[RMDB]
RNA sequence: GGGAACGACUCGAGUAGAGUCGAAAAUAUUGCGCUAAGUGCACGAGGGAAAUCAAAAAGAUAAUACCUAUUGAUGCUCAAAGGUAUUUUAGUAACUACAACUUCGGCGAAUAUACACACAUAAGCAAGCUUCCAGAUUAUGGUAUAUUAUCCAUCAGAUCUUCGAUAUAUUCGUAUAUCGAAGAUCAAAAGAAACAACAACAACAAC
Reactivity to 2A3 in 0.01 (KOAc 150mM, MgCl2 10mM, bicine 150mM(pH8.5), 24C), signal-to-noise 8, nucleotides 027 to 156: u110a020u020u090g080c030g000c030u040a050a040g020u030g060c060a030c140g010a060g040g030g030a030a100a060u120c090a030a090a090a030a020g060a020u120a080a010u000a030c000c010u060a250u190u070g050a090u180g060c070u050c150a040a050a000g010g000u000a020u010u040u030u020a040g010u040a040a070c040u060a030c080a110a030c030u060u080c050g030g000c010g030a040a010u070a010u080a050c100a000c010a000c000a070u070a120a020g040c050a050a010g020c040u080u030c030c010a020g010a100u070u070a020u090g000g020u010a060u010a020u150u090a050u070c020c010a030u060c030a030
Reactivity to DMS in 0.01 (KOAc 150mM, MgCl2 10mM, bicine 150mM(pH8.5), 24C), signal-to-noise 4, nucleotides 027 to 156: u000a020u000u000g010c040g020c010u000a020a080g000u010g000c000a060c080g010a190g020g000g020a080a110a120u010c060a070a060a110a140a090g010a110u000a050a070u000a100c020c010u000a180u000u010g000a140u010g010c120u000c040a050a120a080g000g040u000a010u000u000u000u000a100g000u010a100a100c060u000a090c040a050a130c050u000u000c030g050g000c010g010a050a050u000a070u000a060c050a080c040a300c060a070u000a060a060g010c010a050a070g050c030u000u000c020c000a250g000a100u000u000a050u000g010g010u000a060u000a080u000u000a110u010c010c000a080u010c120a230
Overview
This 207-nucleotide RNA was probed chemically with 2A3 and DMS. For 2A3 the reverse transcriptase was SuperScript II with manganese. The reactions ran in a buffer of 150 mM KOAc, 10 mM MgCl2 and 150 mM bicine (pH 8.5), at 24 C. DMS adducts were read by reverse transcription with MarathonRT. Source: RMDB library OK3TST, as collected in RNAgym. Values are in units of 0.01, from 0 to 300, in steps of 10. For 2A3, 7,495 sequencing reads were counted.